An RNA of 177 nucleotides, treated with 2A3 and DMS and read out base by base. For DMS the reverse transcriptase was MarathonRT.
[RMDB]
RNA sequence: GGGAACGACUCGAGUAGAGUCGAAAACAGCGGAAGCCUGGAAGAAGCAACUCAGAAGUGGAUAAAGAGGGACCAAGAUGUUGCCCAAGUCGCAGCUAUGUUAUCUGCACUAGCUGGAAAAGUGUCAAAUCUCCGUUACCUUCGGGUAACGGAGAUUAAAAGAAACAACAACAACAAC
Reactivity to 2A3 in 0.01 (KOAc 150mM, MgCl2 10mM, bicine 150mM(pH8.5), 24C), signal-to-noise 1, nucleotides 027 to 126: c040a010g070c010g110g000a060a090g050c010c000u070g030g030a050a190g000a010a040g000c000a000a000c020u020c070a120g010a170a030g060u000g000g000a020u040a050a050a000g060a060g010g000g050a020c000c000a020a020g070a090u010g100u090u010g000c000c000c020a050a000g040u080c070g000c120a000g040c030u000a000u160g120u130u120a060u000c040u020g020c010a000c080u020a000g070c030u050g000g020a000a100a020a000g120u110g100u120c020a160
Reactivity to DMS in 0.01 (KOAc 150mM, MgCl2 10mM, bicine 150mM(pH8.5), 24C), signal-to-noise 1, nucleotides 027 to 126: c110a170g000c110g000g030a050a020g000c030c020u010g030g000a030a060g020a190a130g000c030a020a060c040u000c020a000g000a270a070g000u000g000g010a150u000a040a150a000g060a100g000g010g000a010c040c030a160a170g030a030u070g000u000u020g000c000c050c010a170a060g000u000c090g010c000a020g000c040u000a070u040g000u000u000a090u030c090u130g000c050a050c160u000a010g000c020u000g000g020a000a160a090a170g000u000g010u000c040a070